[RMDB]
RNA sequence: GGGAACGACUCGAGUAGAGUCGAAAACAAUGGUGGAGUCGUAGACCCCAUGGAACCGCAGCCAGAUGACAAACAGCAGGGCUGCGUAACCUAAGGUGAGGAGGUGGUGACCGAGGAUGUUCCCCAGAUUCCUGCAGGCUUUCGAGCCUGCAGGAAUAAAAGAAACAACAACAACAAC
Reactivity to 2A3 in 0.01 (KOAc 150mM, MgCl2 10mM, bicine 150mM(pH8.5), 24C), signal-to-noise 1, nucleotides 027 to 126: c020a120a200u160g240g000u100g140g060a010g020u060c000g050u060a130g000a120c000c000c000c010a000u010g000g000a000a020c070c000g000c000a000g000c070c000a050g050a260u110g000a020c080a100a200a030c050a050g090c010a060g150g050g000c000u070g020c000g000u000a000a000c000c000u000a120a120g000g120u080g000a110g060g000a000g070g030u040g000g000u020g050a100c000c000g000a050g000g000a050u140g000u000u050c000c000c000c010a000g000
Reactivity to DMS in 0.01 (KOAc 150mM, MgCl2 10mM, bicine 150mM(pH8.5), 24C), signal-to-noise 1, nucleotides 027 to 126: c060a210a020u120g000g000u090g000g010a040g050u000c000g000u020a130g030a180c010c000c020c020a070u060g000g000a020a090c270c000g030c040a000g010c050c000a050g000a090u000g000a100c160a130a270a300c190a060g000c160a130g000g080g020c000u120g030c000g000u000a000a140c120c000u050a110a180g000g100u030g030a110g000g030a090g010g000u020g030g030u000g030a150c030c000g000a000g000g000a050u050g000u000u000c000c000c010c170a100g000
Description:
Chemical mapping of a 177-nucleotide RNA with 2A3 and DMS. It was measured as part of the RMDB library RFM100. For 2A3 the reverse transcriptase was SuperScript II with manganese. DMS (dimethyl sulfate) methylates the pairing face of unpaired adenines and cytosines.